[RMDB]
RNA sequence: GGGAACGACUCGAGUAGAGUCGAAAAGCUCGCCCCCAGACCCGAGAUGAGCCUCGUGCCGAGGAGAGGCCGGAGACGGAGAGGCAGGAGGUCCCGAGGAGUAUCCAAGCAAAGAAGGGGAAGGAUCAAGGCGCUGCCUUCGGGCAGCGCAAAAGAAACAACAACAACAAC
Reactivity to 2A3 in 0.01 (KOAc 150mM, MgCl2 10mM, bicine 150mM(pH8.5), 24C), signal-to-noise 1, nucleotides 027 to 129: g000c000u020c060g060c000c000c010c000c020a030g070a120c010c020c000g060a060g020a070u070g000a000g010c000c000u010c000g050u030g040c000c010g010a020g000g090a020g000a010g030g030c000c020g010g000a000g020a040c070g000g000a020g000a020g000g000c000a020g080g020a000g000g070u110c000c000c000g040a000g010g000a000g000u040a010u050c010c000a070a000g010c000a040a030a120g020a040a050g000g030g010g050a100a000g040g000a010u110c030a000a020g180
Reactivity to DMS in 0.01 (KOAc 150mM, MgCl2 10mM, bicine 150mM(pH8.5), 24C), signal-to-noise 1, nucleotides 027 to 129: g010c010u020c030g030c060c000c030c070c100a090g000a200c190c000c000g000a050g010a100u020g000a120g000c000c010u000c030g090u020g010c080c020g030a040g000g000a050g010a040g040g070c000c000g110g000a120g000a110c140g050g010a040g010a080g000g070c250a090g020g000a070g000g010u030c020c000c000g000a030g000g000a010g000u080a000u040c110c000a070a040g040c170a020a060a130g020a030a040g060g000g000g010a110a030g010g000a030u010c130a050a060g010
The record gives the reactivity of an RNA of 170 nucleotides to 2A3 and DMS. It was measured as part of the RMDB library 15KLIB. Conditions: 150 mM KOAc, 10 mM MgCl2 and 150 mM bicine (pH 8.5), 24 C.